[RMDB]
RNA sequence: GGGAACGACUCGAGUAGAGUCGAAAACGCGGGUUUCCCCGUAGCCAUUUACUGGCACCUCUCCACUAGCGUCUAGACCGAGGCUACGCUCGUUAAUUGGCUACUAGCCUGGAGCCCGGCUAGGAAGGAAGAAAUCACUAUUCGUAGUGAUUUCUUCAAAAGAAACAACAACAACAAC
Reactivity to DMS in 0.01 (KOAc 150mM, MgCl2 10mM, bicine 150mM(pH8.5), 24C), signal-to-noise 9, nucleotides 027 to 126: c120g010c050g010g000g010u000u010u000c050c020c070c250g020u000a040g020c010c000a040u000u000u010a060c130u000g010g010c010a180c040c040u000c010u000c090c140a100c050u000a050g010c190g010u010c040u000a040g000a140c170c070g000a040g000g000c090u010a050c170g000c010u000c150g000u000u010a040a090u000u000g010g000c030u000a040c060u010a070g010c050c060u000g010g010a090g000c020c020c080g000g000c030u000a030g000g010a120a100g010
Reactivity to 2A3 in 0.01 (KOAc 150mM, MgCl2 10mM, bicine 150mM(pH8.5), 24C), signal-to-noise 7, nucleotides 027 to 126: c070g010c020g010g000g000u060u240u080c040c010c000c020g010u010a010g000c000c000a020u070u080u130a070c060u030g010g000c000a020c000c010u030c010u020c040c030a070c060u050a040g070c030g200u050c050u030a040g030a180c010c040g040a070g020g000c040u110a060c090g020c020u020c020g020u020u050a070a050u140u070g030g000c010u030a050c010u020a080g050c010c040u040g020g010a010g000c010c010c010g010g010c010u020a020g040g090a090a030g110

Structure probing data (DMS and 2A3) for a 177-nucleotide construct.
For 2A3, 17,894 sequencing reads were counted.
Conditions: 150 mM KOAc, 10 mM MgCl2 and 150 mM bicine (pH 8.5), 24 C.
DMS adducts were read by reverse transcription with MarathonRT.
The DMS profile rests on 15,219 reads.